Annotation:
This 177-nucleotide RNA was probed chemically with DMS and 2A3. The 2A3 profile rests on 1,874 reads. For DMS, 745 sequencing reads were counted. For DMS the reverse transcriptase was MarathonRT. The reactions ran in a buffer of 150 mM KOAc, 10 mM MgCl2 and 150 mM bicine (pH 8.5), at 24 C.
[RMDB]
RNA sequence: GGGAACGACUCGAGUAGAGUCGAAAACGAUGAAGAGCGUCAGCGGACGGCCUCUGAGACGAGCGAUGGACAGUAGAGCUCGUCUCUACCAGUCGCGUGCUGACUCUCACGCCCACCCGCACGGCUGCCCUACCACAUAGUUCGCUAUGUGGUAGGGAAAAGAAACAACAACAACAAC
Reactivity to DMS in 0.01 (KOAc 150mM, MgCl2 10mM, bicine 150mM(pH8.5), 24C), signal-to-noise 1, nucleotides 027 to 126: c060g010a160u000g000a000a160g010a020g000c120g000u000c040a030g000c030g010g000a130c000g000g000c030c040u000c130u000g010a040g000a010c000g000a070g000c010g010a100u020g010g000a070c180a160g040u010a010g010a300g000c030u000c040g000u000c010u000c000u000a020c120c150a030g000u000c000g040c040g010u000g030c010u000g000a060c130u000c010u000c000a100c160g010c010c000c010a070c030c010c020g000c030a060c120g010g010c030u030g000
Reactivity to 2A3 in 0.01 (KOAc 150mM, MgCl2 10mM, bicine 150mM(pH8.5), 24C), signal-to-noise 2, nucleotides 027 to 126: c040g060a130u140g100a150a200g010a020g020c050g050u020c040a020g010c040g040g080a160c000g020g000c000c010u000c050u020g010a000g000a010c010g040a060g000c040g000a070u130g060g060a100c090a160g170u140a030g080a000g010c030u000c020g020u000c010u030c000u010a020c020c020a010g030u000c020g000c000g100u130g030c020u000g000a020c000u000c010u000c000a010c040g010c000c030c000a050c000c010c000g070c020a060c050g040g000c040u070g040